[RMDB]
Record summary:
Chemical mapping of a 177-nucleotide RNA with DMS and 2A3. For DMS the reverse transcriptase was MarathonRT. The reactions ran in a buffer of 150 mM KOAc, 10 mM MgCl2 and 150 mM bicine (pH 8.5), at 24 C.
RNA sequence: GGGAACGACUCGAGUAGAGUCGAAAAAGGCACAAGUAGGACACCAACAUUACCUGCAAGCAAGACGCAAAAUUAAUAGAACAUCACCAUACUUGUGGCUUUCUUGCAAGUCGUGCAGUUGCUGCCUAGAUUCAGUAACGUUCGCGUUACUGAAUCUAAAAGAAACAACAACAACAAC
Reactivity to DMS in 0.01 (KOAc 150mM, MgCl2 10mM, bicine 150mM(pH8.5), 24C), signal-to-noise 3, nucleotides 027 to 126: a010g000g020c050a030c040a160a120g020u010a080g010g010a100c050a130c100c060a130a130c050a050u010u000a040c030c020u000g020c010a010a000g000c090a000a000g010a020c000g000c000a000a020a030a090u060u010a120a100u030a070g010a080a130c180a040u010c130a080c100c130a100u040a030c230u010u000g030u000g000g000c000u000u000u000c000u000u000g000c010a010a010g000u000c040g000u000g000c100a090g000u000u000g000c080u010g000c000c020u020
Reactivity to 2A3 in 0.01 (KOAc 150mM, MgCl2 10mM, bicine 150mM(pH8.5), 24C), signal-to-noise 6, nucleotides 027 to 126: a000g030g000c010a030c020a030a040g080u100a060g180g050a050c030a030c090c030a000a050c010a020u010u030a010c020c010u010g010c000a000a010g010c000a020a000g020a020c000g000c010a000a040a040a070u200u170a080a130u140a130g130a110a060c060a110u160c050a090c120c040a080u160a230c070u000u000g000u000g010g000c000u010u010u000c000u020u000g000c000a010a000g000u010c030g010u030g010c030a030g040u070u050g020c070u020g010c000c000u010

DMS (dimethyl sulfate) methylates the pairing face of unpaired adenines and cytosines.